[RMDB]
RNA sequence: GGGAACGACUCGAGUAGAGUCGAAAAAUGGUAGUUAGUCUACUCGCUAUCCUAGUUACUUUGGAGUAAUCUAAAGUGUGUGUAAACGGGCGAAAGUCUGAAAAAUACUGGGGACAUAGGGUCAACAAGAACUAGUAGACCUUCGGGUCUACUAGAAGAAAUAUUGGAGUUUCGACUCCAAUAUUUCAAAAGAAACAACAACAACAAC
Reactivity to DMS in 0.01 (KOAc 150mM, MgCl2 10mM, bicine 150mM(pH8.5), 24C), signal-to-noise 2, nucleotides 027 to 156: a110u000g000g010u000a040g030u000u000a120g020u000c010u000a030c010u000c060g000c070u010a130u000c010c010u000a070g020u000u000a010c000u000u010u010g020g020a080g010u010a170a140u010c010u000a020a010a030g020u000g010u000g010u000g020u000a090a090a210c060g000g050g000c000g010a130a110a190g010u000c040u010g000a000a070a030a040a100u000a050c030u000g010g020g020g030a070c040a130u000a070g020g020g030u000c060a030a070c030a080a160g010a080a220c000u000a000g010u000a010g000a000c000c000u020u010c290g040g050g010u000c000u000a000c000u000a010g010a050a070
Reactivity to 2A3 in 0.01 (KOAc 150mM, MgCl2 10mM, bicine 150mM(pH8.5), 24C), signal-to-noise 2, nucleotides 027 to 156: a000u070g030g000u030a030g030u100u090a030g040u020c010u020a030c020u030c020g020c030u040a050u110c000c000u030a050g030u040u070a020c010u010u000u030g020g000a030g030u140a150a120u000c000u020a010a030a020g020u040g000u010g010u000g030u050a110a100a040c050g010g020g000c010g060a070a020a010g020u000c020u040g090a060a040a020a060a030u090a040c030u020g000g000g000g030a010c030a070u060a030g080g000g030u050c020a010a030c030a120a080g090a080a010c010u000a000g000u000a000g000a000c010c000u030u030c120g060g000g010u010c000u010a000c000u000a000g000a000a010
The record gives the reactivity of an RNA of 207 nucleotides to DMS and 2A3.
The reactions ran in a buffer of 150 mM KOAc, 10 mM MgCl2 and 150 mM bicine (pH 8.5), at 24 C.
Source: RMDB library M2RFPK, as collected in RNAgym.
For 2A3, 2,065 sequencing reads were counted.